[RMDB]
RNA sequence: GGGAACGACUCGAGUAGAGUCGAAAACCGUGCACGUUCGCGUGCACGGAAAAAGAUAUGGAUCCACUCAGACAUGCCUAAUUAUCGGAAACGAUAGAUAGGCAACAGCUGACAUGUGGAUCCUAAGUCAAAAAACAAGACGUUUCGACGUCUUGAACCAAUAGACAUCUUUCGAGAUGUCUAUUGGAAAAGAAACAACAACAACAAC
Reactivity to 2A3 in 0.01 (KOAc 150mM, MgCl2 10mM, bicine 150mM(pH8.5), 24C), signal-to-noise 4, nucleotides 027 to 156: c000c000g000u000g010c020a010c010g040u070u130c300g010c020g070u000g060c000a010c000g000g030a070a030a010a000a000g010a000u020a010u030g010g000a000u000c000c000a000c000u010c000a010g040a100c080a160u300g030c010c000u060a110a100u080u000a010u010c000g010g010a040a010a010c000g000a000u000a010g040a020u020a000g020g000c020a030a040c010a020g020c000u010g010a050c020a300u130g010u000g000g000a000u000c000c000u000a000a000g000u000c020a030a010a000a050a020a100c010a000a000g030a000c010g010u000u100u190c280g110a040c020g010u010c000u000u000g000a020a020
Reactivity to DMS in 0.01 (KOAc 150mM, MgCl2 10mM, bicine 150mM(pH8.5), 24C), signal-to-noise 1, nucleotides 027 to 156: c000c000g000u000g040c000a020c000g030u000u000c300g090c020g020u000g000c010a010c020g000g000a000a010a000a090a090g000a080u010a130u010g010g000a010u000c000c000a030c030u000c000a020g010a070c030a300u030g100c000c000u000a010a060u000u000a010u010c030g020g000a170a110a180c000g090a010u010a010g010a040u010a000g040g020c020a030a010c090a200g020c050u000g000a010c260a060u010g000u000g000g010a030u000c010c000u000a010a040g010u010c010a000a050a060a070a110a180c000a030a000g000a010c000g010u000u000u000c220g000a140c020g010u000c000u000u010g000a050a120